[RMDB]
RNA sequence: GGGAACGACUCGAGUAGAGUCGAAAACGCCUGCGGCGAGGCGCCGUGGCCGGUCAACAGCUUGGCGACGUCGGAGUCACCGGUGGCCAGCCCGACCAUCACGUGCUCGGUGGAGACGUACUCGUCGGCUAUCCCAGGGCUUCGGCCCUGGGAUAGCAAAAGAAACAACAACAACAAC
Reactivity to 2A3 in 0.01 (KOAc 150mM, MgCl2 10mM, bicine 150mM(pH8.5), 24C), signal-to-noise 1, nucleotides 027 to 126: c010g080c000c000u010g000c000g000g000c000g020a040g030g000c020g020c000c010g040u070g050g000c000c020g010g000u050c000a010a030c000a170g070c080u300u300g000g000c000g020a080c020g070u240c090g100g040a190g080u120c030a020c090c000g000g000u020g000g000c010c000a000g000c000c000c000g020a000c000c000a050u090c100a000c020g050u100g020c030u000c070g110g060u050g070g000a020g000a030c020g000u070a300c050u030c000g010u010c000g050
Description: An RNA of 177 nucleotides, treated with 2A3 and read out base by base. For 2A3 the reverse transcriptase was SuperScript II with manganese. The RNA was probed in 150 mM KOAc, 10 mM MgCl2 and 150 mM bicine (pH 8.5) at 24 C. The 2A3 profile rests on 516 reads.